[RMDB]
RNA sequence: GGGAACGACUCGAGUAGAGUCGAAAAAGAGGUAAUCUCAAAUUGUAACAGUGGGUUGAUUUUCCUGGUGAAUCCCGGCCUUGUCCUCCGUCACAAGUGUGACAAGUGUCUCGAAAACGUGUUCGCUAUACCCACGUUACAGAUUGGGGUUUCCCCACUAAAAAUUCAUGUUCGCAUGAAUUUUUAGAAAAGAAACAACAACAACAAC
Reactivity to DMS in 0.01 (KOAc 150mM, MgCl2 10mM, bicine 150mM(pH8.5), 24C), signal-to-noise 2, nucleotides 027 to 156: a100g020a080g020g020u010a030a040u000c000u010c000a060a040a150u000u000g010u010a030a010c010a140g050u000g000g000g040u000u000g030a170u000u010u010u000c100c130u000g020g020u000g000a060a090u000c070c050c030g030g000c040c010u020u020g010u000c010c020u000c030c040g030u010c300a170c240a150a070g000u040g000u010g010a020c010a000a030g010u000g010u000c010u000c010g010a150a060a100a070c090g020u010g010u000u000c040g020c030u000a170u000a090c020c000c000a010c000g020u000u000a070c020a030g020a180u000u010g000g000g040g050u000u010u010c040c000c050c020a240
Reactivity to 2A3 in 0.01 (KOAc 150mM, MgCl2 10mM, bicine 150mM(pH8.5), 24C), signal-to-noise 5, nucleotides 027 to 156: a000g090a060g020g020u050a010a020u000c000u010c000a030a040a030u050u010g010u000a010a100c110a190g010u010g000g020g030u050u050g100a180u150u180u210u230c110c090u140g020g010u010g020a030a030u060c040c060c010g000g000c010c000u000u010g000u000c000c000u000c010c020g100u070c030a040c010a170a100g010u020g060u120g100a000c000a010a000g060u070g040u140c080u080c170g060a070a070a060a070c060g060u090g000u100u010c010g000c000u020a020u070a090c000c000c000a000c000g000u000u000a000c000a000g030a020u000u010g000g000g020g000u010u010u020c000c010c010c000a030